[RMDB]
RNA sequence: GGGAACGACUCGAGUAGAGUCGAAAAGGCGUAAGUUCCUGAACAAUUUGCGGAAAUUGGUGUGGGUCGUAUUGUCCCCCCCUCUCCGCCAGAUUGAGGCGAGUAGGUGCGCCAGUGCCGCGUGGGUUAAAUCGAUCGUAUUCGUACGAUCGAUUUAAAAAGAAACAACAACAACAAC
Reactivity to DMS in 0.01 (KOAc 150mM, MgCl2 10mM, bicine 150mM(pH8.5), 24C), signal-to-noise 4, nucleotides 027 to 126: g000g030c040g020u000a060a140g010u000u030c010c000u000g010a080a140c100a040a050u010u000u020g010c050g000g000a010a060a060u010u010g010g010u000g030u020g040g000g000u000c030g020u030a140u030u050g010u000c010c000c000c100c090c000c060u000c050u000c010c050g030c060c050a030g000a100u010u000g000a160g000g010c010g010a100g010u060a060g020g020u030g000c040g010c010c020a080g020u000g020c020c030g000c060g030u000g030g000g020u000
Reactivity to 2A3 in 0.01 (KOAc 150mM, MgCl2 10mM, bicine 150mM(pH8.5), 24C), signal-to-noise 4, nucleotides 027 to 126: g060g000c030g040u060a040a030g070u010u040c020c000u030g010a040a000c030a010a060u040u040u180g000c010g010g050a040a080a140u090u110g010g010u050g020u160g060g020g000u080c080g070u240a140u080u300g100u090c010c000c010c000c010c000c000u000c000u020c040c010g000c000c000a030g010a060u040u100g040a050g090g000c030g000a010g020u080a000g100g040u090g050c030g000c000c010a030g050u030g030c020c000g020c020g030u070g050g050g030u020

The data come from the RNA Mapping Database (RMDB), libraries RFM100 and RFMREP. Structure probing data (DMS and 2A3) for a 177-nucleotide construct. The reactions ran in a buffer of 150 mM KOAc, 10 mM MgCl2 and 150 mM bicine (pH 8.5), at 24 C.